The record gives the reactivity of an RNA of 177 nucleotides to DMS and 2A3.

[RMDB]
RNA sequence: GGGAACGACUCGAGUAGAGUCGAAAAGGGGCAGAUUCUCGUGAACGUCAAGGCAUCGGGCGUGUGCCAUACCGAUCUGCACGCGGCCGACGGCGACUGGCCCGUCAAGCCGACGCUGCCGUUCAUACAUCCUCCGAGGAUUCGUCCUCGGAGGAUGAAAAGAAACAACAACAACAAC
Reactivity to DMS in 0.01 (KOAc 150mM, MgCl2 10mM, bicine 150mM(pH8.5), 24C), signal-to-noise 2, nucleotides 027 to 126: g030g010g010g000c030a010g000a110u010u010c030u010c060g000u000g000a040a050c050g020u000c070a060a100g020g010c020a240u000c030g000g000g000c000g000u000g000u030g030c070c300a110u000a140c140c170g010a080u000c140u020g000c020a010c020g010c010g000g010c000c040g000a040c080g020g000c000g000a130c080u000g010g000c040c010c000g000u000c060a090a180g020c110c120g010a100c090g000c050u020g000c030c010g010u010u000c020a120u000a180
Reactivity to 2A3 in 0.01 (KOAc 150mM, MgCl2 10mM, bicine 150mM(pH8.5), 24C), signal-to-noise 2, nucleotides 027 to 126: g020g010g000g010c000a000g030a160u080u000c060u020c030g080u050g040a020a030c010g030u060c110a090a100g100g000c030a030u020c030g020g040g030c000g000u030g010u010g010c050c030a040u130a080c020c070g070a100u030c050u130g000c000a000c010g000c000g000g140c040c010g040a030c100g020g020c010g070a130c080u060g000g000c000c000c020g000u040c000a070a040g090c090c090g010a060c060g010c020u020g050c010c010g000u030u020c020a010u010a120
The RNA was probed in 150 mM KOAc, 10 mM MgCl2 and 150 mM bicine (pH 8.5) at 24 C.